[RMDB]
RNA sequence: GGGAACGACUCGAGUAGAGUCGAAAAGAUAUGGAGUCGAAGCAACAGCUAUGACUUCGGAAACGAAGUAUAGACAUGCACGACUCCUAAGUCAAAAUCACCUUCUUGCUUCGGCAAGAAGGUGAAACAGAAGGAAUAACUUCGGUUAUUCCUUCUGAAAAGAAACAACAACAACAAC
Reactivity to DMS in 0.01 (KOAc 150mM, MgCl2 10mM, bicine 150mM(pH8.5), 24C), signal-to-noise 7, nucleotides 027 to 126: g010a020u000a210u000g000g010a010g010u000c000g010a170a130g040c010a030a100c300a150g020c000u000a010u000g010a030c000u000u000c000g010g000a040a040a090c010g010a010a000g000u000a010u000a010g010a120c120a140u000g000c000a270c010g000a010c000u000c000c000u000a010a050g000u000c010a100a080a090a140u010c000a010c010c000u000u000c000u000u000g010c000u000u020c260g010g000c000a000a010g010a000a000g000g010u000g000a000a040a120
Reactivity to 2A3 in 0.01 (KOAc 150mM, MgCl2 10mM, bicine 150mM(pH8.5), 24C), signal-to-noise 6, nucleotides 027 to 126: g010a010u030a010u070g000g010a010g010u020c020g070a260a040g000c010a010a150c060a200g040c000u020a020u090g300a180c000u000u000c000g010g000a020a010a000c000g000a000a000g020u010a010u010a010g170a260c110a110u030g000c000a010c020g000a000c000u000c000c000u000a000a000g000u000c000a010a000a000a300u030c000a000c000c000u000u000c010u000u010g000c000u040u060c200g170g000c000a000a000g000a000a000g000g000u000g000a000a000a000